[RMDB]
RNA sequence: GGGAACGACUCGAGUAGAGUCGAAAAGCUGUUUGCCACAGGCUACGGCAUUUAUAAAGACUACUACAGCGACCUGAGCGACAUGGAGUUCGGCGAGAUGUUCUCGGCUGGCAUCUCCGACGCCGUCCGAGCGUUCAAGACCUCCGGCUCCGGCAUGAUCCGAAUGAACUUUCGAGUUCAUUCGGAUAAAAGAAACAACAACAACAAC
Reactivity to 2A3 in 0.01 (KOAc 150mM, MgCl2 10mM, bicine 150mM(pH8.5), 24C), signal-to-noise 1, nucleotides 027 to 156: g040c020u020g050u230u290u160g100c110c070a300c170a300g010g040c000u010a000c040g000g020c020a040u090u270u000a200u150a030a110a060g020a040c090u200a090c030u050a000c180a020g020c040g050a280c000c020u030g000a030g010c000g200a270c110a140u180g030g000a020g030u010u200c000g000g000c070g010a150g030a030u020g180u190u160c030u010c040g020g000c020u020g000g000c000a010u070c170u000c130c090g050a080c030g000c000c000g000u050c000c010g010a000g060c020g010u010u010c000a000a070g050a050c000c000u000c020c020g000g000c010u020c020c000g000g070c030a110u210g030
Conditions: 150 mM KOAc, 10 mM MgCl2 and 150 mM bicine (pH 8.5), 24 C. An RNA of 207 nucleotides, treated with 2A3 and read out base by base. Values cover nucleotides 27 to 156. Source: RMDB library OK3TST, as collected in RNAgym. For 2A3, 404 sequencing reads were counted.